[RMDB]
RNA sequence: GGGAACGACUCGAGUAGAGUCGAAAAGAUGAUCGUCCAGUUCGUUGACGUCAUCAUCACCUGCCGGGAAAUGAUGCGAGAGCAGCUUGCCCGCCUGGCCGAUGGCCUCAACGAAGCCUUCGCCAAACUAGGGUAUUAGGUUCGCCUAAUACCCUAGAAAAGAAACAACAACAACAAC
Reactivity to DMS in 0.01 (KOAc 150mM, MgCl2 10mM, bicine 150mM(pH8.5), 24C), signal-to-noise 7, nucleotides 027 to 126: g000a060u020g000a050u010c060g020u010c030c130a190g030u000u010c120g010u000u000g020a030c180g000u000c030a010u000c000a080u010c170a170c020c010u000g010c300c010g000g000g010a030a090a040u010g010a220u000g000c010g000a220g000a230g000c010a020g000c020u000u000g000c010c010c010g000c160c040u000g000g010c120c060g000a020u000g000g010c010c030u000c020a040a040c090g000a040a090g010c050c030u000u000c020g020c060c040a060a080a230
Reactivity to 2A3 in 0.01 (KOAc 150mM, MgCl2 10mM, bicine 150mM(pH8.5), 24C), signal-to-noise 3, nucleotides 027 to 126: g040a020u090g000a040u160c040g030u000c050c020a060g120u120u150c060g020u120u100g000a000c010g040u030c000a000u000c000a000u040c000a030c030c000u010g040c060c000g010g000g040a050a220a140u100g050a040u040g000c010g010a030g000a010g100c000a010g040c020u070u120g020c030c000c000g000c010c020u040g000g010c000c060g010a010u020g010g000c010c010u010c020a080a120c060g050a010a000g000c010c020u030u050c020g030c030c020a040a050a090

Structure probing data (DMS and 2A3) for a 177-nucleotide construct. The data come from the RNA Mapping Database (RMDB), library OK2TST. Values are in units of 0.01, from 0 to 300, in steps of 10. For 2A3, 5,456 sequencing reads were counted. The reactions ran in a buffer of 150 mM KOAc, 10 mM MgCl2 and 150 mM bicine (pH 8.5), at 24 C.